[RMDB]
RNA sequence: GGGAACGACUCGAGUAGAGUCGAAAACGGGAAACUGAGGCCAAUAGCGGAUAUCACUCUCAUGCUGGAGUGCAGAGAGUGAGAAACGUUCCGGCGCUGUAGGAUGUGGCUGCGGCCGAUUAGGUAGCCUACCUCUGCGGUUCGCCGCAGAGGUAGGAAAAGAAACAACAACAACAAC
Reactivity to DMS in 0.01 (KOAc 150mM, MgCl2 10mM, bicine 150mM(pH8.5), 24C), signal-to-noise 1, nucleotides 027 to 126: c070g010g000g040a070a050a080c000u000g020a180g000g010c000c050a080a110u080a060g050c000g030g000a040u000a130u000c000a030c000u000c000u040c000a090u020g050c020u000g020g030a110g040u040g060c000a060g000a010g020a050g000u000g000a000g070a060a040a150c050g040u000u000c190c060g030g010c010g020c010u000g000u000a040g000g000a030u000g000u000g000g010c020u000g010c100g020g010c010c050g010a090u040u080a130g020g000u000a070g030
Reactivity to 2A3 in 0.01 (KOAc 150mM, MgCl2 10mM, bicine 150mM(pH8.5), 24C), signal-to-noise 2, nucleotides 027 to 126: c030g020g020g060a080a000a000c040u130g010a110g050g080c010c080a080a070u140a200g000c010g060g000a010u010a000u060c000a000c000u010c000u000c070a290u020g030c010u140g050g300a240g090u150g000c000a000g000a000g000a010g000u010g000a000g000a000a100a000c020g020u020u000c020c030g060g010c010g030c010u020g000u040a000g040g060a010u100g070u100g140g040c010u020g000c030g000g000c000c020g000a000u000u010a050g010g010u020a010g080
Structure probing data (DMS and 2A3) for a 177-nucleotide construct.
DMS adducts were read by reverse transcription with MarathonRT.
For 2A3 the reverse transcriptase was SuperScript II with manganese.
For 2A3, 990 sequencing reads were counted.